[RMDB]
RNA sequence: GGGAACGACUCGAGUAGAGUCGAAAAGCGGUGACAGAUACGAUAUGUGCCAAGACAUGCGGUCGUGGGUAGCUGAGAGAAAUGGAUUAAUCCAGGACUUACUCAAAGCAAAAAAACAAAUUGAUCGCUAUGACGAGUGUUUCGACACUCGUCAUAGAAAAGAAACAACAACAACAAC
Reactivity to 2A3 in 0.01 (KOAc 150mM, MgCl2 10mM, bicine 150mM(pH8.5), 24C), signal-to-noise 1, nucleotides 027 to 126: g030c040g000g090u030g110a030c030a060g100a130u100a120c010g000a040u000a020u210g040u030g000c030c000a040a020g060a050c030a020u140g020c060g040g000u030c020g080u050g090g010g010u040a070g000c020u020g020a000g000a010g000a030a040a070u070g000g000a020u110u090a160a190u120c010c010a020g030g030a050c030u020u110a100c010u090c000a050a050a000g000c000a070a060a030a030a000a000a030c130a060a160a040u130u170g090a080u120c020g000
Reactivity to DMS in 0.01 (KOAc 150mM, MgCl2 10mM, bicine 150mM(pH8.5), 24C), signal-to-noise 2, nucleotides 027 to 126: g000c100g030g050u000g000a040c040a060g020a100u000a060c120g010a120u000a040u000g020u010g020c000c060a110a070g010a040c100a040u000g000c020g000g010u000c030g000u000g050g000g000u020a130g010c020u000g000a300g000a050g010a050a080a130u000g000g070a060u030u020a110a100u010c010c020a000g000g000a260c110u020u000a090c020u000c020a020a090a080g030c070a000a000a040a010a050a090a050c160a050a040a130u000u000g050a080u000c070g020